[RMDB]
RNA sequence: GGGAACGACUCGAGUAGAGUCGAAAAGUUAUCAUGAAUCUUACUGGCACAGUAAUUAUUUCGGAUGCUGGUAGUUCUGACGAUGCUCCCAGUGACGUUAGAAUUAUUAGGCCAGCGAUUAUUGGAAAAAUUUAUUAGCCUUCGGGCUAAUAAAUUUAAAAGAAACAACAACAACAAC
Reactivity to DMS in 0.01 (KOAc 150mM, MgCl2 10mM, bicine 150mM(pH8.5), 24C), signal-to-noise 1, nucleotides 027 to 126: g000u010u020a100u010c030a050u010g010a040a030u000c020u000u000a140c010u000g000g000c020a060c060a050g000u010a000a000u000u000a070u000u000u000c090g020g000a270u000g000c000u000g020g020u000a010g010u000u000c050u000g030a090c170g000a110u010g020c040u000c030c020c010a080g000u020g020a110c010g010u020u000a020g000a030a020u010u000a060u000u000a210g000g020c000c000a010g030c180g000a030u000u010a090u000u000g000g020a080a120

This 177-nucleotide RNA was probed chemically with DMS. DMS (dimethyl sulfate) methylates the pairing face of unpaired adenines and cytosines. For DMS the reverse transcriptase was MarathonRT. The reactions ran in a buffer of 150 mM KOAc, 10 mM MgCl2 and 150 mM bicine (pH 8.5), at 24 C.